[RMDB]
RNA sequence: GGGAACGACUCGAGUAGAGUCGAAAAGUUGAGUGUAUCAUGUCAGUAAGCAUGCCGGGGAAUGGUGGUUUACCCCGUUAUCAAAUGAUUACCGACCAAUAAUUGGCGAAACUCGUUUCGCGUUGGCAAAGUCACGGCGUGUUCGCACGCCGUGAAACUAAGAAAAGCGUUUCGACGCUUUUCUUAGAAAAGAAACAACAACAACAAC
Reactivity to DMS in 0.01 (KOAc 150mM, MgCl2 10mM, bicine 150mM(pH8.5), 24C), signal-to-noise 2, nucleotides 027 to 156: g010u000u000g000a090g010u010g010u000a060u000c060a090u000g020u000c030a050g020u010a040a070g010c040a060u000g020c170c040g000g010g030g020a070a120u010g020g010u000g030g020u000u000u010a300c020c000c000c010g040u000u000a050u000c300a060a110a030u000g000a050u000u010a030c020c000g000a060c020c060a070a130u000a030a210u000u010g030g020c010g010a100a070a060c040u000c090g000u020u010u020c020g040c080g010u010u000g010g000c060a020a060a160g000u000c000a000c010g010g030c000g050u010g000u000u000c300g070c010a000c000g020c000c010g050u000g010a000a000a110
Reactivity to 2A3 in 0.01 (KOAc 150mM, MgCl2 10mM, bicine 150mM(pH8.5), 24C), signal-to-noise 4, nucleotides 027 to 156: g050u060u030g060a070g020u110g030u060a040u150c020a040u050g090u090c040a040g120u140a110a010g040c050a010u070g070c020c010g010g000g000g010a020a050u040g030g020u020g010g020u050u030u080a070c000c000c000c000g020u030u040a050u050c020a040a020a040u040g000a010u040u060a000c010c010g060a070c040c040a000a000u120a110a090u090u150g070g000c010g000a020a010a000c050u070c100g070u010u020u020c020g000c020g000u010u020g020g010c070a090a050a020g030u040c010a010c040g000g000c010g000u010g020u020u020c120g010c060a010c000g000c000c000g000u010g000a000a000a000
An RNA of 207 nucleotides, treated with DMS and 2A3 and read out base by base. Values are in units of 0.01, from 0 to 300, in steps of 10. DMS adducts were read by reverse transcription with MarathonRT.